[RMDB]
RNA sequence: GGGAACGACUCGAGUAGAGUCGAAAAGGUGAGACCAGUGCCGACCGGCAAGGUGAAGUGGUACGACCCCGACAAGGGGUUCGGCUUCCUGUCACAGGAGGGUGGCGAGGAUGUCUACGUCCGCUCCCUCAGAUUAGUGCUUCGGCACUAAUCUGAGAAAAGAAACAACAACAACAAC
Reactivity to 2A3 in 0.01 (KOAc 150mM, MgCl2 10mM, bicine 150mM(pH8.5), 24C), signal-to-noise 1, nucleotides 027 to 126: g000g000u070g030a170g030a060c020c030a050g040u030g070c010c000g060a040c020c090g080g030c060a040a090g120g000u090g000a040a020g020u040g010g020u030a170c000g000a010c000c000c000c000g040a140c250a150a090g020g000g010g090u010u040c020g010g000c000u010u000c020c020u070g050u060c000a020c000a120g080g100a040g070g030g030u030g000g020c050g040a080g090g020a070u060g060u030c030u100a110c040g070u040c000c010g040c040u030c000c030
Reactivity to DMS in 0.01 (KOAc 150mM, MgCl2 10mM, bicine 150mM(pH8.5), 24C), signal-to-noise 2, nucleotides 027 to 126: g000g010u010g020a100g000a090c030c040a130g030u000g020c030c040g000a090c200c110g000g020c060a130a080g030g000u000g010a080a090g000u000g000g020u000a070c020g010a120c000c000c000c000g000a140c220a150a160g010g010g000g010u010u010c030g000g000c020u000u000c230c020u000g010u010c030a050c080a130g010g010a070g000g000g010u010g020g000c020g020a120g010g000a090u010g010u010c060u000a080c080g010u010c020c000g000c060u000c040c020
The record gives the reactivity of an RNA of 177 nucleotides to 2A3 and DMS.
Reactivities are rounded to 0.1 and cut off at 0 and 3.
The reactions ran in a buffer of 150 mM KOAc, 10 mM MgCl2 and 150 mM bicine (pH 8.5), at 24 C.
Reactivities are given for positions 27 through 126.
For 2A3 the reverse transcriptase was SuperScript II with manganese.
It was measured as part of the RMDB library OK2TRN.
High 2A3 reactivity points to a flexible backbone, as in loops and unpaired stretches.